[RMDB]
RNA sequence: GGGAACGACUCGAGUAGAGUCGAAAACUCACCUUUCACAUCACAAGACUCUCCUUUCAUCGACAAAGGCAACAGAGUGUGGAUCACAGGAUCAGAUUUCACCAAAGACACAAACUUUGUGUAAACAAGCUCAACUUUAUCAACCUCUUCACUGACAGUCAUUAUCACGUUUCGACGUGAUAAUGACAAAAGAAACAACAACAACAAC
Reactivity to 2A3 in 0.01 (KOAc 150mM, MgCl2 10mM, bicine 150mM(pH8.5), 24C), signal-to-noise 8, nucleotides 027 to 156: c040u040c030a120c020c020u050u110u120c120a130c070a170u100c030a040c020a120a060g060a070c020u020c010u030c020c010u080u070u040c080a200u110c090g090a080c070a030a060a030g030g000c030a080a050c010a080g030a000g050u070g020u030g060g030a040u040c030a040c030a130g060g010a030u070c010a030g060a160u040u090u060c030a040c040c020a040a030a050g070a020c040a010c030a100a190a100c040u110u130u050g040u030g020u070a020a050a010c030a060a010g020c010u040c070a050a080c060u050u110u130a110u120c030a030a080c020c030u030c000u140u140c050a070c150u130g100a050c040a050
Reactivity to DMS in 0.01 (KOAc 150mM, MgCl2 10mM, bicine 150mM(pH8.5), 24C), signal-to-noise 2, nucleotides 027 to 156: c010u000c050a140c090c020u000u000u000c070a000c100a140u020c040a110c060a110a040g020a080c010u000c000u000c010c010u000u020u000c060a070u020c070g010a070c080a070a080a120g030g040c080a090a090c060a130g050a060g050u000g010u010g010g000a080u000c170a110c140a060g010g020a120u000c090a140g000a180u010u000u000c040a040c040c000a010a060a060g010a100c050a120c180a090a060a120c050u000u000u020g020u000g010u000a060a070a100c070a020a110g010c010u010c050a050a050c020u000u000u000a070u000c020a050a050c020c010u000c020u000u000c020a060c030u040g030a060c120a060